Conditions: 150 mM KOAc, 10 mM MgCl2 and 150 mM bicine (pH 8.5), 24 C. Chemical mapping of a 177-nucleotide RNA with DMS. For DMS, 973 sequencing reads were counted. DMS adducts were read by reverse transcription with MarathonRT.
[RMDB]
RNA sequence: GGGAACGACUCGAGUAGAGUCGAAAAGGAUUGCUGUUCGAGUGAAUCUACACUUAAAUAAGCAAAUUGAGCUAUCUGAAGCUCUACAGUAUGGCUUUGAUCAUGAUGAGGAAGAUCUUAUCUAAUAUGAACCGUUAAACUUCGGUUUAACGGUUCAAAAAGAAACAACAACAACAAC
Reactivity to DMS in 0.01 (KOAc 150mM, MgCl2 10mM, bicine 150mM(pH8.5), 24C), signal-to-noise 2, nucleotides 027 to 126: g090g010a210u000u000g010c010u000g020u000u000c050g020a020g010u000g010a200a070u010c150u010a190c010a020c020u010u000a050a020a040u010a040a020g010c020a020a030a190u000u000g000a020g030c020u000a030u000c060u000g030a120a080g030c010u000c070u000a030c080a060g010u010a030u000g030g010c040u000u010u010g050a070u010c040a080u000g000a120u000g020a050g000g000a090a110g000a080u000c040u010u010a070u010c020u010a110a070u020a150